[RMDB]
RNA sequence: GGGAACGACUCGAGUAGAGUCGAAAAGAUGAACAUGGACGGUUUUGUGACUAAGUGACAAUUGUUCGGCAAUAGAUUUGACGCUUAUCCCAUUGAUCAGUAACUGGAAUACCUCUUUCUCGCGUGGCCAUCGACAGGAUUUCGAUCCUGUCGAUGGAAAAGAAACAACAACAACAAC
Reactivity to DMS in 0.01 (KOAc 150mM, MgCl2 10mM, bicine 150mM(pH8.5), 24C), signal-to-noise 2, nucleotides 027 to 126: g020a070u010g010a110a130c090a090u000g030g020a050c080g010g000u000u000u000u020g020u010g000a040c080u020a060a110g010u000g010a050c070a070a070u000u000g020u000u010c050g010g000c090a080a080u000a090g020a070u000u000u000g030a070c050g010c040u000u020a090u000c010c000c030a120u000u000g000a070u000c070a060g010u010a040a080c090u000g000g010a050a110u000a070c080c020u000c040u000u000u000c040u020c060g000c130g000u010g010g000
Reactivity to 2A3 in 0.01 (KOAc 150mM, MgCl2 10mM, bicine 150mM(pH8.5), 24C), signal-to-noise 2, nucleotides 027 to 126: g060a040u170g060a050a030c010a040u040g010g050a020c060g040g040u070u040u080u070g100u090g050a020c040u050a030a090g010u000g070a020c020a040a090u040u060g010u050u110c050g030g010c030a030a070u040a130g120a150u050u050u120g020a000c040g000c020u020u040a050u100c000c020c070a090u010u140g060a090u050c030a020g050u040a090a030c040u030g020g030a090a000u040a070c000c050u000c000u030u040u000c070u000c030g000c040g070u060g060g000